[RMDB]
Overview: Chemical mapping of a 207-nucleotide RNA with DMS and 2A3. The RNA was probed in 150 mM KOAc, 10 mM MgCl2 and 150 mM bicine (pH 8.5) at 24 C. Values cover nucleotides 27 to 156. Source: RMDB library OK3TST, as collected in RNAgym.
RNA sequence: GGGAACGACUCGAGUAGAGUCGAAAAACAGUCAAAGACGUGAAAACAAAAUCAUGUGUUUUUAGUGUUUGCCUAUGAGAUUAGCAAAAAUUUAAAAGAUUGACACAAUGUUACCAUGGCUGUGGGAAAACAGGUACUGUUUUAUAUUUAUUGGUGACUCCGCAUUAUAGUUCGCUAUAAUGCGGAGAAAAGAAACAACAACAACAAC
Reactivity to DMS in 0.01 (KOAc 150mM, MgCl2 10mM, bicine 150mM(pH8.5), 24C), signal-to-noise 1, nucleotides 027 to 156: a040c000a110g010u000c040a060a020a060g020a040c040g030u000g000a010a110a100a110c090a130a080a200a190u010c150a100u010g020u000g010u010u020u000u000u000a110g040u010g020u010u000u000g010c000c020u000a220u000g000a300g020a200u010u000a020g000c010a070a020a040a110a060u000u000u000a090a020a060a110g030a130u000u000g020a110c000a040c060a080a170u010g000u000u000a040c050c010a070u020g010g000c000u000g000u020g020g000g010a050a010a030a070c070a030g030g000u010a050c020u000g030u000u000u000u000a070u020a110u010u000u000a110u020u000g010g010u010g030a160
Reactivity to 2A3 in 0.01 (KOAc 150mM, MgCl2 10mM, bicine 150mM(pH8.5), 24C), signal-to-noise 2, nucleotides 027 to 156: a000c030a000g070u020c020a040a010a030g050a040c060g060u070g050a040a050a120a090c070a010a110a030a110u090c080a080u070g040u010g050u010u040u000u020u160a080g040u030g050u000u020u030g000c010c000u030a090u100g050a080g020a090u100u100a050g020c020a000a010a060a100a100u120u230u180a120a150a050a020g150a090u050u080g030a010c010a000c020a080a070u020g020u040u040a030c020c000a000u050g100g000c020u040g020u030g010g000g110a010a080a000a010c030a010g050g000u060a050c010u030g050u010u030u020u000a040u030a020u060u190u020a070u110u030g030g000u080g040a000